Chemical mapping of a 207-nucleotide RNA with 2A3 and DMS.
RNA sequence: GGGAACGACUCGAGUAGAGUCGAAAAGUUCUGUGUCUGCAAAACCACCAACUCUGGGCUGGGGCAGGAAAACGGGAUGUUUAAUUGUCUCCUCAUAUGCGAACAAGGCAAUGGACUUGAUUCACCCCAAACAUUUGUGCAUUGGACUCUGUCCUCAUACCAUCAUAGUAUUCGUACUAUGAUGGUAAAAAGAAACAACAACAACAAC
Reactivity to 2A3 in 0.01 (KOAc 150mM, MgCl2 10mM, bicine 150mM(pH8.5), 24C), signal-to-noise 6, nucleotides 027 to 156: g030u030u030c020u020g040u010g030u010c030u060g040c040a030a050a080a120c000c030a040c020c030a080a090c100u080c090u170g030g050g040c080u050g010g000g030g000c020a050g000g070a020a080a020a040c040g020g020g040a050u100g050u050u090u070a120a080u090u050g020u010c020u040c060c020u070c060a120u150a060u240g070c080g030a060a030c040a080a020g050g000c030a020a040u070g010g040a040c000u040u060g050a070u170u080c020a060c010c000c010c020a040a120a040c060a120u050u070u140g060u060g020c050a070u040u100g020g000a020c010u020c070u300g040u050c000c010u050c010a030
Reactivity to DMS in 0.01 (KOAc 150mM, MgCl2 10mM, bicine 150mM(pH8.5), 24C), signal-to-noise 3, nucleotides 027 to 156: g020u010u010c000u000g010u000g030u000c020u000g020c030a100a070a120a110c020c020a070c020c040a120a140c060u010c080u000g000g010g000c060u000g020g010g020g000c060a090g020g000a080a060a050a100c080g010g010g030a070u010g020u010u000u010a060a170u000u010g010u000c020u000c020c020u010c060a130u000a130u000g010c070g000a060a130c060a050a080g010g000c010a060a080u000g020g010a050c030u000u000g000a210u000u010c070a110c030c020c010c020a050a100a080c090a120u000u000u000g040u000g010c040a150u010u010g010g010a080c090u000c080u000g030u000c020c010u010c020a300
2A3 adducts were read by reverse transcription with SuperScript II with manganese. DMS adducts were read by reverse transcription with MarathonRT. It was measured as part of the RMDB library OK3TST. The DMS profile rests on 6,609 reads. As a SHAPE reagent, 2A3 marks flexible, mostly unpaired nucleotides at the ribose 2'-OH.